[RMDB]
The record gives the reactivity of an RNA of 177 nucleotides to DMS. Values cover nucleotides 27 to 126. The RNA was probed in 150 mM KOAc, 10 mM MgCl2 and 150 mM bicine (pH 8.5) at 24 C. For DMS the reverse transcriptase was MarathonRT. The data come from the RNA Mapping Database (RMDB), library OK2TST.
RNA sequence: GGGAACGACUCGAGUAGAGUCGAAAACUUCCGACAACGCGACUGUGGUUAUCGGUACUUCUCUUGACCCGGAUAUGAAUGACGAGCUGCGCGUAACCGUUGUUGCGACAGGUAUCGGCAUGGACAACAAGCAGGGGGAUUUCGAUCCCCCUGCUUGAAAAGAAACAACAACAACAAC
Reactivity to DMS in 0.01 (KOAc 150mM, MgCl2 10mM, bicine 150mM(pH8.5), 24C), signal-to-noise 1, nucleotides 027 to 126: c130u000u000c010c000g010a050c140a040a010c060g000c060g040a070c160u000g030u010g030g000u000u020a040u010c030g000g000u000a070c170u000u000c040u000c050u030u000g000a080c040c030c000g000g010a150u000a090u000g000a090a070u000g000a030c040g030a020g000c050u000g020c170g010c040g000u030a060a090c040c300g020u000u000g000u000u000g000c000g000a040c040a030g020g010u000a080u000c000g020g000c040a050u000g010g020a100c080a120a210